[RMDB]
An RNA of 177 nucleotides, treated with DMS and 2A3 and read out base by base. The DMS profile rests on 1,481 reads. For 2A3 the reverse transcriptase was SuperScript II with manganese. Values cover nucleotides 27 to 126. In probing experiments dimethyl sulfate is read out at A N1 and C N3, which are open when not base-paired. The RNA was probed in 150 mM KOAc, 10 mM MgCl2 and 150 mM bicine (pH 8.5) at 24 C. It was measured as part of the RMDB library TTRDES.
RNA sequence: GGGAACGACUCGAGUAGAGUCGAAAAGAUAUGGACUCCAGGUACGCUUCGAAGAACAUUCUCGGAAACGAGAAUGGGAGAAGGUACUGGAGUCCUAAGUCAAAAGUGUCCAGUUCGCUGGACACAAGCUUGUUCUCUAGUUCGCUAGAGAACAAGCAAAAGAAACAACAACAACAAC
Reactivity to DMS in 0.01 (KOAc 150mM, MgCl2 10mM, bicine 150mM(pH8.5), 24C), signal-to-noise 2, nucleotides 027 to 126: g000a010u010a300u010g020g000a020c000u000c000c000a000g000g030u000a000c000g040c040u000u010c010g000a150a160g040a170a240c020a000u010u000c000u000c000g000g000a140a100a250c000g010a000g000a010a020u000g000g010g000a030g010a020a020g000g000u000a030c000u010g000g000a020g000u000c000c000u000a000a080g010u000c100a070a060a100a130g010u000g000u000c000c000a010g010u010u020c300g030c000u000g000g000a000c010a000c000a070a060
Reactivity to 2A3 in 0.01 (KOAc 150mM, MgCl2 10mM, bicine 150mM(pH8.5), 24C), signal-to-noise 2, nucleotides 027 to 126: g030a030u050a070u170g020g000a010c010u000c010c010a040g280g130u070a030c260g100c300u040u050c050g300a300a110g000a070a000c020a000u010u000c010u010c000g030g020a110a090a080c010g000a010g000a010a000u000g000g000g010a030g000a010a030g060g020u010a010c000u010g010g010a000g000u010c000c000u000a010a000g000u000c000a000a010a070a140g010u010g000u000c000c000a000g000u000u090c300g010c100u000g020g000a000c010a020c010a000a010